[RMDB]
RNA sequence: GGGAACGACUCGAGUAGAGUCGAAAAGAUAUGGAACGAUCUUUAGGGAGUCGCCUCGGAAACGAGACGACUUUGAUCUAAAGAGUCGUUCCUAAGUCAAAGGUCAUGCCCUUCGGGGCAUGACCAACAUGUCGAAUUGGUUCGCCAAUUCGACAUGAAAAGAAACAACAACAACAAC
Reactivity to DMS in 0.01 (KOAc 150mM, MgCl2 10mM, bicine 150mM(pH8.5), 24C), signal-to-noise 1, nucleotides 027 to 126: g000a040u000a300u010g010g000a020a000c010g010a040u000c000u000u000u000a000g020g000g000a010g020u000c000g010c030c010u010c010g020g000a090a050a100c000g000a010g010a000c010g010a010c000u000u000u010g030a080u010c000u000a000a030a020g000a060g050u010c000g010u010u010c000c000u000a020a110g000u000c020a080a080a090g010g020u000c000a000u000g000c000c000c010u000u000c220g020g020g000g030c000a010u000g000a000c000c000a010a030